[RMDB]
Record summary:
The data come from the RNA Mapping Database (RMDB), libraries RFM100 and RFMREP. Chemical mapping of a 177-nucleotide RNA with 2A3 and DMS. In probing experiments dimethyl sulfate is read out at A N1 and C N3, which are open when not base-paired. The RNA was probed in 150 mM KOAc, 10 mM MgCl2 and 150 mM bicine (pH 8.5) at 24 C.
RNA sequence: GGGAACGACUCGAGUAGAGUCGAAAAAGAAGAAAUAUGAAAGAUAUGCUAGGAAUGUUUAGCGAUACAUUUUACCAAAAAUCGCUGCGAUUCCAAGAAUUCAUAUUUAUUUUGAAACGCUACUGGGGAGUAAUGCUAAUUUCGAUUAGCAUUACUCAAAAGAAACAACAACAACAAC
Reactivity to 2A3 in 0.01 (KOAc 150mM, MgCl2 10mM, bicine 150mM(pH8.5), 24C), signal-to-noise 9, nucleotides 027 to 126: a010g110a020a000g030a000a020a000u030a000u010g010a040a020a010g120a060u130a040u300g130c060u080a060g000g020a010a010u030g040u090u240u140a060g000c000g010a000u050a060c060a110u070u100u100u190a110c060c030a020a040a030a010a040u000c000g000c000u000g000c050g110a070u010u000c010c000a000a010g030a020a040u010u000c000a000u010a010u020u020u010a100u010u050u030u030g060a070a060a000c040g020c080u100a050c050u110g040g010g070
Reactivity to DMS in 0.01 (KOAc 150mM, MgCl2 10mM, bicine 150mM(pH8.5), 24C), signal-to-noise 7, nucleotides 027 to 126: a060g000a080a070g010a060a020a010u000a000u000g000a020a030a110g010a180u020a070u030g010c070u000a100g000g000a020a000u000g000u020u020u010a020g020c000g010a010u010a040c190a120u020u010u010u050a160c290c260a030a060a070a070a010u000c000g010c000u000g010c280g000a020u000u000c010c000a080a060g000a180a100u000u000c000a000u000a000u000u000u000a050u010u010u000u000g000a110a080a070c080g010c070u000a030c040u000g010g010g020